RNA sequence: GGGAACGACUCGAGUAGAGUCGAAAAUCACUCUCCCUUGAACUUUCCUCCUGGGUAGGGCCCCCCAGGCAUCAACGGCAAGGAUGGGACCCCAGGCACGCCUGGCAUGAAGGUAGGAGUGGGGCUGCAAAGGGGUCUAAUUCGUUAGACCCCUUUGAAAAGAAACAACAACAACAAC
Reactivity to DMS in 0.01 (KOAc 150mM, MgCl2 10mM, bicine 150mM(pH8.5), 24C), signal-to-noise 4, nucleotides 027 to 126: u010c070a100c050u000c050u010c070c000c020u020u000g010a120a140c110u010u000u010c030c010u010c060c010u000g010g000g010u000a080g020g000g020c010c010c030c010c010c000a040g020g010c150a060u000c090a070a070c140g010g020c050a080a040g000g010a080u000g010g000g010a120c040c060c010c030a050g000g010c070a060c200g020c010c010u000g010g000c110a090u010g000a090a090g000g010u000a070g010g010a070g010u000g000g000g020g010c070u000g010